Overview
Chemical mapping of a 177-nucleotide RNA with 2A3 and DMS.

[RMDB]
RNA sequence: GGGAACGACUCGAGUAGAGUCGAAAAACGUGUUGAGUGCUAUGACAGGUUUAAAGUUAAUGAGACAAAUUCUCAAUAUUUGUUUAGUACUAUUAAUGCUCUACCAGAAACUUCUGCCGAUAUUCUGACCUAAUAAACACUUCGGUGUUUAUUAGGUAAAAGAAACAACAACAACAAC
Reactivity to 2A3 in 0.01 (KOAc 150mM, MgCl2 10mM, bicine 150mM(pH8.5), 24C), signal-to-noise 3, nucleotides 027 to 126: a000c040g010u090g000u060u050g040a050g010u040g000c010u030a060u190g010a010c010a000g030g070u010u140u160a070a080a020g020u050u150a090a070u160g010a000g000a030c030a040a250a090u240u030c050u020c020a030a050u070a040u030u010u010g010u000u020u000a000g020u010a000c030u010a040u160u090a030a010u050g010c010u000c020u020a050c000c020a000g080a070a070a050c010u050u070c020u070g080c040c050g070a030u020a130u170u040c030u030g010
Reactivity to DMS in 0.01 (KOAc 150mM, MgCl2 10mM, bicine 150mM(pH8.5), 24C), signal-to-noise 4, nucleotides 027 to 126: a090c140g010u000g020u000u010g010a060g020u000g010c020u010a030u020g010a040c050a040g030g000u010u000u000a060a090a110g010u010u020a060a080u010g000a090g000a030c100a080a040a120u010u000c090u010c060a040a100u010a030u000u000u000g000u000u000u000a080g010u000a030c020u000a060u010u000a070a050u020g000c020u000c050u000a130c030c030a110g000a100a060a100c110u010u000c060u000g000c040c060g010a090u010a070u000u010c050u000g010

DMS adducts were read by reverse transcription with MarathonRT.
The RNA was probed in 150 mM KOAc, 10 mM MgCl2 and 150 mM bicine (pH 8.5) at 24 C.
For DMS, 3,125 sequencing reads were counted.
The 2A3 profile rests on 1,591 reads.